[RMDB]
An RNA of 177 nucleotides, treated with 2A3 and DMS and read out base by base. It was measured as part of the RMDB library VIROID.

RNA sequence: GGGAACGACUCGAGUAGAGUCGAAAAGCUGGCGCCGGCUGGGCAACAUUCCGAGGGGACCGUCCCCUCGGUAAUGGCAAAUGGGACCCAAAACUCUCUUUAUCUUCCAAAAGAAAAGCAAGAAAAACAUUCCAUAAUGGUUCGCCAUUAUGGAAUGAAAAGAAACAACAACAACAAC
Reactivity to 2A3 in 0.01 (KOAc 150mM, MgCl2 10mM, bicine 150mM(pH8.5), 24C), signal-to-noise 1, nucleotides 027 to 126: g000c000u010g020g010c020g060c050c000g030g030c000u050g100g000g000c010a030a010c000a020u010u000c000c010g010a000g000g060g010g050a100c030c130g300u300c000c000c000c000u000c000g000g010u000a000a010u000g010g000c000a030a070a050u060g010g010g090a110c000c000c000a060a130a020a070c030u050c010u000c000u070u050u050a200u100c020u080u010c050c020a070a030a020a030g090a010a110a020a020g070c100a080a060g130a140a030a040a010a000
Reactivity to DMS in 0.01 (KOAc 150mM, MgCl2 10mM, bicine 150mM(pH8.5), 24C), signal-to-noise 2, nucleotides 027 to 126: g000c060u000g010g000c070g060c040c000g000g000c030u000g010g010g020c000a090a170c010a020u000u020c010c020g000a020g010g020g010g010a300c270c300g020u000c010c000c000c010u000c000g050g020u020a020a010u000g010g000c180a120a070a090u000g010g020g000a090c030c040c030a110a070a110a150c090u000c010u000c020u000u000u020a100u020c050u010u000c130c060a040a080a070a050g010a090a070a060a060g000c120a070a140g030a050a060a050a080a150
The RNA was probed in 150 mM KOAc, 10 mM MgCl2 and 150 mM bicine (pH 8.5) at 24 C. In probing experiments dimethyl sulfate is read out at A N1 and C N3, which are open when not base-paired.